[RMDB]
RNA sequence: GGGAACGACUCGAGUAGAGUCGAAAACUCGCCCUCGGCGAAGGGGAUAGCAUACCUGAUAUCGCCUCCCUGGAAGAGGUGCCUAAGAUCUUCGAGGGUCUCGGUCGCGACGAGAAGCGCGCGGCAAACUCCCUGCAAGGCAACGGAGACGGAGAAGACCGACUUUAUGAUUCGUCAUAAAGUCGGUAAAAGAAACAACAACAACAAC
Reactivity to DMS in 0.01 (KOAc 150mM, MgCl2 10mM, bicine 150mM(pH8.5), 24C), signal-to-noise 2, nucleotides 027 to 156: c050u000c020g000c040c000c020u000c060g040g000c070g000a140a100g000g030g010g020a080u000a010g000c060a250u000a090c110c040u000g010a160u000a060u000c040g000c000c000u010c010c010c030u010g010g000a120a080g010a070g010g000u000g030c030c000u010a090a150g010a070u000c030u000u000c060g000a170g030g000g020u010c040u000c050g010g030u000c020g020c010g020a120c010g000a190g020a060a210g000c040g010c040g040c100g010g030c010a020a040a060c040u000c010c010c000u000g020c020a090a050g010g010c040a090a110c030g010g010a110g030a130c050g010g020a180g000a120a140g020
Reactivity to 2A3 in 0.01 (KOAc 150mM, MgCl2 10mM, bicine 150mM(pH8.5), 24C), signal-to-noise 4, nucleotides 027 to 156: c010u000c040g030c000c000c000u030c020g090g010c060g020a040a010g010g000g010g020a030u090a040g040c040a040u060a170c020c070u130g050a110u040a030u100c040g010c010c010u010c030c000c000u030g070g030a060a030g010a010g020g030u070g050c010c010u130a150a070g050a110u030c020u040u050c080g040a040g000g010g060u010c060u040c060g040g010u000c000g000c010g020a130c020g030a060g110a240a090g110c110g010c000g000c000g110g000c010a050a020a090c020u020c010c000c000u030g050c070a110a080g030g030c020a050a030c050g060g020a060g010a040c050g080g010a070g010a070a020g030
The data come from the RNA Mapping Database (RMDB), library OK3TST. Chemical mapping of a 207-nucleotide RNA with DMS and 2A3. Reactivities are given for positions 27 through 156.